RNA sequence: GGGAACGACUCGAGUAGAGUCGAAAAGCUAGAGGGGCACGAGCCAUUCUCGAUUUUCCUGACAAGCUGAAUUUUUCCACUUGUCCUGUCAAAUACAGCACCCAGAAGAUUCUGCUGGUACGAAACAUAGGUGUUACAGAUUCGUCUGUAACACCUAAAAAGAAACAACAACAACAAC
Reactivity to 2A3 in 0.01 (KOAc 150mM, MgCl2 10mM, bicine 150mM(pH8.5), 24C), signal-to-noise 2, nucleotides 027 to 126: g010c040u050a000g010a030g120g010g020g040c060a040c200g100a080g000c060c040a090u300u000c000u000c030g040a020u000u080u030u000c000c000u000g010a000c000a010a000g050c070u060g040a080a070u160u120u050u150u060c040c020a040c010u030u040g020u060c000c000u040g080u080c090a130a140a080u150a120c010a030g030c040a030c010c000c000a040g060a150a000g050a110u140u040c010u130g040c030u040g000g060u070a080c090g040a090a010a010c040a080
Reactivity to DMS in 0.01 (KOAc 150mM, MgCl2 10mM, bicine 150mM(pH8.5), 24C), signal-to-noise 4, nucleotides 027 to 126: g020c080u000a090g010a150g010g010g000g020c140a110c210g000a100g000c050c050a070u020u000c010u000c020g010a190u000u000u000u000c000c000u000g010a040c090a020a030g010c070u000g020a050a070u000u000u000u010u010c040c080a070c060u000u000g010u000c040c100u000g010u000c090a070a080a110u010a090c060a030g000c150a070c060c060c050a080g000a040a140g000a120u000u000c040u000g010c030u010g010g000u010a050c090g000a120a090a080c200a140